Source: RMDB library OK3TST, as collected in RNAgym. Structure probing data (2A3 and DMS) for a 207-nucleotide construct. DMS adducts were read by reverse transcription with MarathonRT. The RNA was probed in 150 mM KOAc, 10 mM MgCl2 and 150 mM bicine (pH 8.5) at 24 C. Reactivities are given for positions 27 through 156.

RNA sequence: GGGAACGACUCGAGUAGAGUCGAAAAUAAGUGGCCCGCCAACUAACAUGGAUUGGAGGAAGGGAGUGGUGGUCAAGAAACAAAGAAGAUGACAGAAUGAAGUCCUCCUGGGAGACCUGAUAGUGGUUCUGUUUAAUUUUACAUUUUAACACGGAUAGAUUUAUCCUAAUUUCGAUUAGGAUAAAUCAAAAGAAACAACAACAACAAC
Reactivity to 2A3 in 0.01 (KOAc 150mM, MgCl2 10mM, bicine 150mM(pH8.5), 24C), signal-to-noise 1, nucleotides 027 to 156: u120a090a010g080u100g020g040c000c000c000g030c070c000a070a050c050u100a000a040c010a040u060g030g000a060u010u130g000g030a030g010g030a010a010g000g000g080a060g020u010g050g010u040g000g030u020c050a010a010g060a050a080a000c070a070a230a000g090a050a000g030a020u030g020a020c030a080g160a150a110u140g000a090a000g000u000c000c000u020c000c000u000g000g040g020a030g020a030c030c020u100g060a050u030a010g080u050g000g000u030u050c010u050g060u060u110u020a060a020u010u040u030u220a020c020a060u010u120u050u100a030a070c060a000c090g040g020a000u010a040
Reactivity to DMS in 0.01 (KOAc 150mM, MgCl2 10mM, bicine 150mM(pH8.5), 24C), signal-to-noise 1, nucleotides 027 to 156: u020a120a090g020u000g020g010c020c050c080g020c030c060a040a140c100u030a010a120c100a070u010g010g040a140u000u010g020g010a080g030g000a120a140g010g030g040a140g010u000g000g050u010g020g090u030c040a120a110g000a050a090a070c040a020a090a110g010a090a050g010a140u010g000a090c020a130g010a070a040u020g000a110a240g000u000c020c020u000c060c010u000g020g010g010a150g010a040c040c100u000g000a110u000a080g030u000g040g010u000u000c050u000g030u000u000u000a050a100u000u000u010u000a050c110a110u000u000u000u000a080a120c030a100c030g010g010a220u000a110